[RMDB]
RNA sequence: GGGAACGACUCGAGUAGAGUCGAAAAAAAUUCCAUGCACCACAGCAGACACAGAGGGAUGUGGUGUUAGCAUGGAGAGUACGAUAUUCACCGAGACUCUUUCCACGGCAGCGUGCGUGUCUGCGCACCUGCCCGUGCGUUUCGACGCACGGGCAGGAAAAGAAACAACAACAACAAC
Reactivity to DMS in 0.01 (KOAc 150mM, MgCl2 10mM, bicine 150mM(pH8.5), 24C), signal-to-noise 3, nucleotides 027 to 126: a030a040a110u010u000c010c000a030u010g010c000a040c020c010a010c010a060g000c040a060g010a050c040a100c090a140g010a140g040g010g010a130u010g020u000g000g020u010g000u000u000a070g000c060a030u000g000g010a030g010a070g030u010a060c060g000a060u000a120u010u010c100a100c050c000g010a070g000a080c100u000c010u000u000u000c000c000a040c130g010g000c110a060g000c110g020u000g000c030g010u000g010u010c030u010g000c010g010c150a090
Reactivity to 2A3 in 0.01 (KOAc 150mM, MgCl2 10mM, bicine 150mM(pH8.5), 24C), signal-to-noise 4, nucleotides 027 to 126: a000a000a000u090u000c010c000a000u020g010c000a000c000c000a000c030a020g010c020a020g050a080c020a010c020a130g240a150g140g100g040a090u080g020u010g000g000u010g020u060u110a050g030c020a020u040g030g000a020g010a010g050u040a020c030g030a050u020a110u170u140c050a040c050c040g050a060g030a150c030u010c000u040u070u030c030c010a020c010g060g000c050a050g070c050g060u050g020c040g010u020g040u020c050u070g000c010g000c010a070

Notes
Source: RMDB library OK2TST, as collected in RNAgym. This 177-nucleotide RNA was probed chemically with DMS and 2A3. The reactions ran in a buffer of 150 mM KOAc, 10 mM MgCl2 and 150 mM bicine (pH 8.5), at 24 C. For DMS, 3,029 sequencing reads were counted.